This 177-nucleotide RNA was probed chemically with DMS and 2A3. 2A3 adducts were read by reverse transcription with SuperScript II with manganese. The RNA was probed in 150 mM KOAc, 10 mM MgCl2 and 150 mM bicine (pH 8.5) at 24 C. Source: RMDB library OK2TST, as collected in RNAgym. For DMS, 2,671 sequencing reads were counted. For DMS the reverse transcriptase was MarathonRT.
[RMDB]
RNA sequence: GGGAACGACUCGAGUAGAGUCGAAAAAGAUAUGCCGAUGGGACCGAAAGAGCGGCGCAGUACGGUGCUGGCUCCGGUGGAAGAGGCUGCAAUCGUGGCAUUGCGGGUCCAGGCAAGGUUACCGCUAAGUGAGUAAUCCAUUCGUGGAUUACUCACUAAAAGAAACAACAACAACAAC
Reactivity to DMS in 0.01 (KOAc 150mM, MgCl2 10mM, bicine 150mM(pH8.5), 24C), signal-to-noise 3, nucleotides 027 to 126: a050g000a170u010a110u000g020c030c010g010a190u000g000g000g010a090c000c000g000a100a150a150g000a060g050c030g000g000c020g030c010a060g000u010a050c170g010g020u000g000c000u000g020g000c000u000c010c010g020g030u000g020g010a090a120g020a060g020g010c040u000g010c020a070a040u010c040g010u000g020g020c090a070u000u000g020c020g010g020g010u000c020c010a120g000g010c040a060a070g000g000u000u010a140c020c010g010c120u000a080
Reactivity to 2A3 in 0.01 (KOAc 150mM, MgCl2 10mM, bicine 150mM(pH8.5), 24C), signal-to-noise 2, nucleotides 027 to 126: a020g040a100u130a040u120g020c000c010g090a130u070g090g000g000a020c010c020g000a280a080a000g080a040g010c040g020g030c000g000c000a000g050u080a020c090g030g010u030g000c000u070g190g010c000u020c030c040g050g060u040g090g010a090a020g050a020g060g010c010u000g030c000a010a150u070c030g060u080g070g000c060a070u000u080g000c050g000g000g000u000c020c010a020g030g000c030a040a040g070g000u110u090a030c000c000g000c060u010a000